Description:
Chemical mapping of a 177-nucleotide RNA with DMS and 2A3. For DMS, 2,640 sequencing reads were counted. The 2A3 profile rests on 2,394 reads. Conditions: 150 mM KOAc, 10 mM MgCl2 and 150 mM bicine (pH 8.5), 24 C. The data come from the RNA Mapping Database (RMDB), library OK1LIB. Values cover nucleotides 27 to 126.

[RMDB]
RNA sequence: GGGAACGACUCGAGUAGAGUCGAAAAAUGAGUAAGCGAGAGCCGAAGGAGAGGAAAGAAGCAAGCGAUUGUCACAAGUCAAGAAAGGUUCUUAGCGUCGAUGGUAGCCAACUUACGUUCCGCUAGACCUCCCGUCUAGAUUCGUCUAGACGGGAGGAAAAGAAACAACAACAACAAC
Reactivity to DMS in 0.01 (KOAc 150mM, MgCl2 10mM, bicine 150mM(pH8.5), 24C), signal-to-noise 2, nucleotides 027 to 126: a140u000g000a130g000u020a060a170g020c060g000a050g030a090g000c050c010g000a030a100g000g020a110g010a140g000g000a050a130a070g000a100a060g000c060a050a060g000c090g000a060u010u040g000u000c020a080c030a110a060g010u030c000a040a140g030a030a060a060g010g020u000u030c010u030u000a040g000c010g000u010c050g040a050u050g000g010u000a110g000c030c060a050a040c090u010u010a100c070g020u010u000c030c010g000c040u000a010g020a300
Reactivity to 2A3 in 0.01 (KOAc 150mM, MgCl2 10mM, bicine 150mM(pH8.5), 24C), signal-to-noise 4, nucleotides 027 to 126: a010u160g010a030g090u080a100a000g040c100g010a020g000a000g140c030c030g030a090a020g060g030a050g010a010g010g080a040a060a050g040a020a030g080c080a080a000g020c020g110a110u010u170g030u030c000a030c020a180a000g020u090c020a040a060g120a120a050a040g120g000u070u030c000u060u060a000g030c010g010u030c020g040a040u060g030g050u040a020g040c030c010a050a020c060u060u080a030c010g020u030u000c000c010g000c090u040a050g050a060